[RMDB]
RNA sequence: GGGAACGACUCGAGUAGAGUCGAAAACAUGGAUGGAGCUGGAAACCAUCAUUCUCAGCAAACUAAAACAGGAACAGAAAACCAAAUACCACAUGUUCUCACUCGUAAGUGGGAAUUGAACAAUGAGAACACAUGGAAACAGGGAGGAGAACAUCACCCUAUAGAUAGCCUUCGGGCUAUCUAUAGGAAAAGAAACAACAACAACAAC
Reactivity to 2A3 in 0.01 (KOAc 150mM, MgCl2 10mM, bicine 150mM(pH8.5), 24C), signal-to-noise 3, nucleotides 027 to 156: c050a100u090g010g000a020u000g010g000a010g020c120u010g010g040a070a000a000c000c000a000u010c010a000u080u050c040u010c010a040g020c040a030a080a110c040u090a010a000a000a040c010a010g000g020a020a020c040a020g080a030a080a010a020c060c020a080a060a040u150a270c030c050a020c010a090u040g000u000u000c000u000c000a010c010u050c090g150u220a160a120g030u070g000g020g050a000a040u040u070g000a020a030c060a030a080u070g000a010g010a070a020c010a000c010a050u100g040g030a030a100a050c030a030g020g010g010a020g050g000a030g030a010a030c020a020u090c020a050c070
Reactivity to DMS in 0.01 (KOAc 150mM, MgCl2 10mM, bicine 150mM(pH8.5), 24C), signal-to-noise 1, nucleotides 027 to 156: c100a100u030g030g020a070u000g020g020a050g060c070u000g040g000a080a050a080c050c000a070u010c070a100u000u000c080u010c080a100g000c060a090a110a120c080u020a060a060a040a040c050a070g000g020a050a110c070a100g000a020a020a070a090c030c030a040a060a140u000a000c020c040a030c090a070u000g080u000u000c010u000c000a010c030u020c180g010u010a060a100g040u040g000g020g020a090a050u000u000g040a150a090c070a050a040u020g000a040g000a060a040c050a050c010a030u000g010g000a090a040a060c040a040g010g010g000a000g000g020a120g060a050a060c100a120u000c070a060c090